The record gives the reactivity of an RNA of 177 nucleotides to 2A3 and DMS. It was measured as part of the RMDB library TTRDES.

RNA sequence: GGGAACGACUCGAGUAGAGUCGAAAAGAUAUGGACGUACUACCAACGACGAUCGUGUCUGUCGGAAACGACAGCACGGGAGUUGAAGUACGUCCUAAGUCAAACGUCGUCAGUUCGCUGACGACGACACUCGUCCAUCCUUCGGGAUGGACGAGUGAAAAGAAACAACAACAACAAC
Reactivity to 2A3 in 0.01 (KOAc 150mM, MgCl2 10mM, bicine 150mM(pH8.5), 24C), signal-to-noise 1, nucleotides 027 to 126: g030a010u070a050u160g000g000a000c010g000u030a010c010u030a140c000c250a050a010c030g300a130c060g000a020u040c000g000u030g240u000c000u010g020u020c000g000g040a030a020a010c000g000a000c000a010g000c000a000c000g000g000g000a080g000u010u020g030a020a000g000u000a000c000g010u000c000c010u000a030a000g000u000c050a070a070a070c020g010u000c000g000u000c000a010g000u070u170c300g000c180u000g000a010c020g000a000c010g000a010
Reactivity to DMS in 0.01 (KOAc 150mM, MgCl2 10mM, bicine 150mM(pH8.5), 24C), signal-to-noise 2, nucleotides 027 to 126: g010a070u000a300u040g000g000a030c010g020u000a010c000u010a120c300c060a000a000c020g000a150c300g030a130u010c000g000u000g000u000c010u000g010u000c010g010g010a050a090a110c000g020a020c010a000g000c000a020c010g000g140g010a090g000u000u020g000a180a000g000u000a000c040g000u010c000c000u000a020a100g030u000c040a150a200a280c020g030u000c000g000u000c020a000g020u010u010c300g050c040u000g000a040c000g000a010c000g020a120

For 2A3 the reverse transcriptase was SuperScript II with manganese. For DMS, 1,191 sequencing reads were counted.